[RMDB]
RNA sequence: GGGAACGACUCGAGUAGAGUCGAAAAGAACAACUUCAACUUGCUCCCUUCCAGAGAGCAUUAUUAACAACCAGUUGGCAUACAGUUCAGGCUUUUUCACAGGUGAGAGUGAAAAUUGAAAGAGUGGAUUAGAGAGUUCUCUGCAGGCAUGCUGGAACCAUCAUCACCGAUUCGUCGGUGAUGAUGGAAAAGAAACAACAACAACAAC
Reactivity to 2A3 in 0.01 (KOAc 150mM, MgCl2 10mM, bicine 150mM(pH8.5), 24C), signal-to-noise 2, nucleotides 027 to 156: g060a050a010c020a010a040c020u110u100c060a100a130c090u060u060g000c010u000c000c010c000u000u090c090c050a050g070a000g000a000g150c010a010u050u090a090u040u100a080a090c060a040a060c020c030a000g020u040u060g100g010c010a040u040a060c030a110g000u040u060c000a010g000g060c010u030u020u000u070u070c090a050c010a000g070g120u070g050a100g000a010g020u030g030a080a030a060a090u080u110g030a100a090a050g060a000g010u040g020g030a060u020u150a060g040a010g010a010g070u050u020c060u020c010u080g010c020a000g010g000c030a020u050g030c060u040g040g020a010a020
Reactivity to DMS in 0.01 (KOAc 150mM, MgCl2 10mM, bicine 150mM(pH8.5), 24C), signal-to-noise 1, nucleotides 027 to 156: g000a180a150c010a020a110c140u000u000c030a130a130c100u020u000g000c030u000c030c000c020u020u000c080c180a160g030a090g010a040g020c010a060u010u000a170u050u000a030a110c060a090a040c030c040a130g000u000u000g030g010c000a100u000a150c020a100g040u010u000c030a200g030g030c040u030u000u000u000u000c030a050c070a100g030g040u000g050a110g020a070g030u000g000a030a020a020a060u010u010g000a060a030a070g020a110g020u000g030g000a090u010u030a110g000a110g010a170g010u010u000c040u020c020u000g030c160a070g000g020c070a040u000g020c000u000g020g020a210a080